[RMDB]
RNA sequence: GGGAACGACUCGAGUAGAGUCGAAAACUACACCAAUAGCGAUAACAAGUGCAUUUCGAAUACCCGCCAUAAUAACAGAUAAUGCGAGUGGCAUUUCGAUGAGGCGUAGUACUUGCCAUUUUGUCAACACCAUCAGCAUGUUCGCAUGCUGAUGGUGAAAAGAAACAACAACAACAAC
Reactivity to 2A3 in 0.01 (KOAc 150mM, MgCl2 10mM, bicine 150mM(pH8.5), 24C), signal-to-noise 3, nucleotides 027 to 126: c020u040a020c000a000c030c000a010a080u070a130g030c030g120a040u050a130a120c070a130a070g060u010g120c070a080u040u070u050c010g010a040a050u090a140c000c040c050g000c050c040a020u080a220a010u060a050a060c030a040g090a120u200a220a020u090g030c060g030a070g080u040g010g030c040a020u030u020u060c020g000a010u070g020a010g030g000c020g000u000a000g020u000a040c020u010u080g100c020c010a140u130u090u000u150g140u080c000a020a000
Reactivity to DMS in 0.01 (KOAc 150mM, MgCl2 10mM, bicine 150mM(pH8.5), 24C), signal-to-noise 2, nucleotides 027 to 126: c030u010a040c030a040c000c060a080a150u000a200g020c050g000a060u020a070a090c230a080a070g030u000g040c010a090u010u000u010c080g000a040a090u000a040c170c040c070g010c040c040a040u000a040a090u000a080a140c100a080g000a060u010a090a050u000g020c050g010a150g020u000g010g000c000a070u000u010u000c040g000a030u000g010a140g000g020c010g020u000a050g050u000a080c110u000u000g020c000c070a120u020u000u000u000g010u000c140a010a100
This 177-nucleotide RNA was probed chemically with 2A3 and DMS.
Conditions: 150 mM KOAc, 10 mM MgCl2 and 150 mM bicine (pH 8.5), 24 C.
For 2A3 the reverse transcriptase was SuperScript II with manganese.